[RMDB]
RNA sequence: GGGAACGACUCGAGUAGAGUCGAAAACUCAAAACCAUGGGACACUAUCACCAAUGUGACCACGAUGGCCAUGACAGACACCACUCCUUUCGGUCAACAACGAGUGUUCAAGGAAAAGGUGGACACACAUUCUACAAUUCUUCGGAAUUGUAGAAUGAAAAGAAACAACAACAACAAC
Reactivity to DMS in 0.01 (KOAc 150mM, MgCl2 10mM, bicine 150mM(pH8.5), 24C), signal-to-noise 7, nucleotides 027 to 126: c030u000c060a100a070a130a140c090c050a060u020g010g010g000a090c030a040c050u010a050u020c060a090c100c100a060a100u030g010u010g000a090c040c050a110c100g000a050u000g010g000c040c030a080u000g000a060c090a070g010a140c050a040c020c030a060c060u010c010c010u000u030u010c080g000g000u000c070a060a080c130a060a090c140g000a090g010u010g000u000u010c020a050a050g010g000a040a050a080a090g000g020u010g000g000a040c070a040c090a220
Reactivity to 2A3 in 0.01 (KOAc 150mM, MgCl2 10mM, bicine 150mM(pH8.5), 24C), signal-to-noise 9, nucleotides 027 to 126: c030u030c010a060a050a020a070c020c020a060u080g010g030g050a030c010a010c030u130a110u140c040a030c080c030a130a100u160g020u050g070a060c010c020a060c080g100a100u090g040g000c020c010a040u100g050a060c030a060g070a020c010a020c020c010a030c030u030c010c000u050u130u110c040g050g020u060c030a040a070c030a050a040c090g070a060g060u030g020u040u030c030a040a030g110g000a060a100a030a030g100g010u020g030g020a000c010a000c000a000
Record summary: The record gives the reactivity of an RNA of 177 nucleotides to DMS and 2A3. The 2A3 profile rests on 32,508 reads. 2A3 adducts were read by reverse transcription with SuperScript II with manganese. Values cover nucleotides 27 to 126.